[RMDB]
RNA sequence: GGGAACGACUCGAGUAGAGUCGAAAAGAUAUGGAAGUGGACUUUUGACGGACGUGGUAUCGGAAACGAUACCCGUCCGAUAAGUCUUUCCUAAGUCAAAAGUGUGAUGUGUUCGCACAUCACACAACACGUAAAGCGAGUUCGCUCGCUUUACGUGAAAAGAAACAACAACAACAAC
Reactivity to 2A3 in 0.01 (KOAc 150mM, MgCl2 10mM, bicine 150mM(pH8.5), 24C), signal-to-noise 3, nucleotides 027 to 126: g010a020u060a040u170g020g070a040a050g170u300g170g020a010c030u120u110u200u300g230a160c060g000g000a000c030g210u300g050g000u000a000u000c010g040g030a050a040a070c010g000a000u000a010c000c000c000g000u030c000c000g010a000u000a010a010g000u000c000u020u010u010c000c000u020a140a060g020u010c050a030a010a070a170g010u010g010u000g000a010u000g040u000g010u060u090c150g100c080a000c000a000u000c000a000c000a000c000a010a000
Reactivity to DMS in 0.01 (KOAc 150mM, MgCl2 10mM, bicine 150mM(pH8.5), 24C), signal-to-noise 2, nucleotides 027 to 126: g010a050u010a300u000g010g020a010a040g020u010g010g010a000c000u000u000u000u010g040a230c210g000g010a000c000g020u020g000g000u000a010u000c000g010g010a170a070a130c010g000a000u000a000c000c000c000g010u000c000c000g020a010u000a010a010g000u000c000u000u000u010c000c010u000a060a130g010u000c030a080a050a080a110g010u000g010u000g000a000u000g010u000g000u010u020c180g020c000a010c000a000u000c000a010c010a000c000a070a110
An RNA of 177 nucleotides, treated with 2A3 and DMS and read out base by base. For DMS the reverse transcriptase was MarathonRT. The 2A3 profile rests on 3,602 reads. 2A3 adducts were read by reverse transcription with SuperScript II with manganese.